This 177-nucleotide RNA was probed chemically with DMS and 2A3. The reactions ran in a buffer of 150 mM KOAc, 10 mM MgCl2 and 150 mM bicine (pH 8.5), at 24 C. Reactivities are given for positions 27 through 126. For DMS, 17,312 sequencing reads were counted.
RNA sequence: GGGAACGACUCGAGUAGAGUCGAAAAGUUCGUCCAUCGCUUCGCCGGCGGAAUCGCCGAGGAGCUUGAGCUCGAUGACAGUGACUAACUUCUCUGUGUGAUCGACCGGAACUGAAAUCGCAGCGACCUAUUAUAAUAGUUUCGACUAUUAUAAUAGAAAAGAAACAACAACAACAAC
Reactivity to DMS in 0.01 (KOAc 150mM, MgCl2 10mM, bicine 150mM(pH8.5), 24C), signal-to-noise 9, nucleotides 027 to 126: g010u000u000c030g010u010c030c080a130u010c120g000c010u000u000c010g020c180c010g010g020c000g000g010a160a100u010c010g020c000c000g000a200g000g000a010g010c010u000u000g010a230g010c070u000c010g010a040u010g000a180c060a030g000u000g000a160c130u000a090a100c140u010u000c020u000c040u000g010u010g020u000g010a060u000c030g010a090c130c120g010g010a100a040c030u010g010a040a160a090u000c040g000c120a060g010c030g010a110c190
Reactivity to 2A3 in 0.01 (KOAc 150mM, MgCl2 10mM, bicine 150mM(pH8.5), 24C), signal-to-noise 6, nucleotides 027 to 126: g020u020u040c020g080u040c060c010a080u090c060g010c010u010u000c020g130c190c000g040g000c030g070g130a270a170u300c010g000c000c000g010a010g010g010a000g000c000u010u100g030a010g000c010u010c030g050a060u050g030a020c030a020g020u000g080a060c030u050a120a040c030u180u040c040u000c020u050g110u040g050u080g130a130u080c020g070a090c030c040g050g000a040a030c020u040g020a050a060a020u090c060g000c090a030g010c020g040a040c000